[RMDB]
RNA sequence: GGGAACGACUCGAGUAGAGUCGAAAACAGAUAAGAAAAGACCGAGAGGUUCAAGCUUAUAGGGCAGAAAGCGGGGGACAGCAGUACUAAACAGUCCCUGUGGCUGAGACGAAGGUAGUACUCCAACAAAACGAGUACUAGUUCGCUAGUACUCGAACUGAAGCUAAAGGUUCGCCUUUAGCUUCAGAAAAGAAACAACAACAACAAC
Reactivity to 2A3 in 0.01 (KOAc 150mM, MgCl2 10mM, bicine 150mM(pH8.5), 24C), signal-to-noise 1, nucleotides 027 to 156: c030a040g040a120u290a120a040g040a050a190a100a000g020a000c010c030g060a070g030a030g190g000u020u070c030a010a010g010c010u090u150a050u160a130g000g040g030c090a030g130a020a060a000g080c080g010g030g000g000g000a010c030a040g010c010a000g030u040a040c010u110a040a170a000c000a050g010u050c000c020c060u040g040u040g010g000c070u040g010a010g010a060c060g000a080a020g040g010u000a000g000u000a010c000u000c050c010a000a010c020a090a130a000a000c020g000a000g050u000a000c010u000a000g010u020u020c120g010c110u010a000g000u000a000c000u000c000g010a040a020